[RMDB]
RNA sequence: GGGAACGACUCGAGUAGAGUCGAAAAUGGAUCACUUCAAUCCAAAAGAAGUCUGCAGAUCCUAUGAUUUGGCUGCUCUUAUGAACAACAUUAAAGAUAUUCAAGAAGAUGGUGAAUUAGACGAGAACCCGGAUUUAAUAUUCGUAUUAAAUCCGGGAAAAGAAACAACAACAACAAC
Reactivity to 2A3 in 0.01 (KOAc 150mM, MgCl2 10mM, bicine 150mM(pH8.5), 24C), signal-to-noise 1, nucleotides 027 to 126: u050g020g000a000u020c040a040c130u060u000c050a040a190u060c000c070a010a040a000a080g000a050a000g030u040c040u140g030c040a000g010a150u000c000c020u060a080u160g060a010u010u060u200g090g000c040u030g030c000u010c000u070u040a000u190g030a030a000c000a000a020c010a110u090u180a140a050a000g050a000u190a050u210u110c080a050a050g160a090a000g090a080u050g020g000u000g030a050a030u060u050a090g060a070c080g250a000g300a060a040
Reactivity to DMS in 0.01 (KOAc 150mM, MgCl2 10mM, bicine 150mM(pH8.5), 24C), signal-to-noise 2, nucleotides 027 to 126: u010g010g000a050u020c050a130c070u020u000c000a080a120u010c160c120a110a140a170a110g000a120a030g000u000c110u010g000c090a060g010a080u000c010c090u000a120u020g000a120u000u010u000g030g020c030u000g000c070u000c030u000u000a170u000g000a070a050c060a070a110c060a030u000u000a120a090a120g000a040u020a180u010u010c070a030a100g010a100a070g000a090u030g030g010u000g010a050a070u000u000a060g020a110c090g010a130g010a150a190